The record gives the reactivity of an RNA of 177 nucleotides to 2A3 and DMS. Conditions: 150 mM KOAc, 10 mM MgCl2 and 150 mM bicine (pH 8.5), 24 C. The data come from the RNA Mapping Database (RMDB), library OK2TST. For 2A3 the reverse transcriptase was SuperScript II with manganese. 2A3 is a SHAPE reagent: it acylates the 2'-hydroxyl of flexible nucleotides of all four kinds. The DMS profile rests on 4,042 reads.

RNA sequence: GGGAACGACUCGAGUAGAGUCGAAAAUUGGCUGCAAUGAAAUCAGUCUUUAUGCCGGUUAUCAGGCAGGAAUAUGGUCAACAUCCCCAAUAGUGGCAGGAAAGCACAGAUUUUAUAGACUAACUCGGUACAUAUGGAACUUCGGUUCCAUAUGUACAAAAGAAACAACAACAACAAC
Reactivity to 2A3 in 0.01 (KOAc 150mM, MgCl2 10mM, bicine 150mM(pH8.5), 24C), signal-to-noise 2, nucleotides 027 to 126: u080u050g020g010c020u030g000c070a050a160u150g050a110a010a050u090c020a010g040u010c000u020u100u040a070u070g010c010c010g000g030u110u040a140u140c090a080g030g000c010a020g030g000a060a010u140a080u150g030g040u040c030a030a040c020a090u040c000c000c000c030a030a020u080a100g040u080g050g010c030a030g030g110a030a010a030g040c040a020c020a040g000a000u010u030u040u070a130u060a040g030a020c030u040a060a010c010u020c040g030
Reactivity to DMS in 0.01 (KOAc 150mM, MgCl2 10mM, bicine 150mM(pH8.5), 24C), signal-to-noise 4, nucleotides 027 to 126: u010u000g020g000c020u010g000c180a140a080u010g010a040a070a090u010c030a050g010u000c030u000u000u000a060u000g010c000c010g010g000u020u010a090u010c090a080g010g010c050a050g010g010a090a050u000a080u010g010g010u000c100a070a060c110a080u000c020c020c010c050a070a080u000a050g020u000g000g010c030a050g010g010a060a040a090g000c070a030c060a070g020a040u010u000u000u000a050u000a140g000a050c060u000a080a080c070u000c060g010

Overview:
DMS adducts were read by reverse transcription with MarathonRT.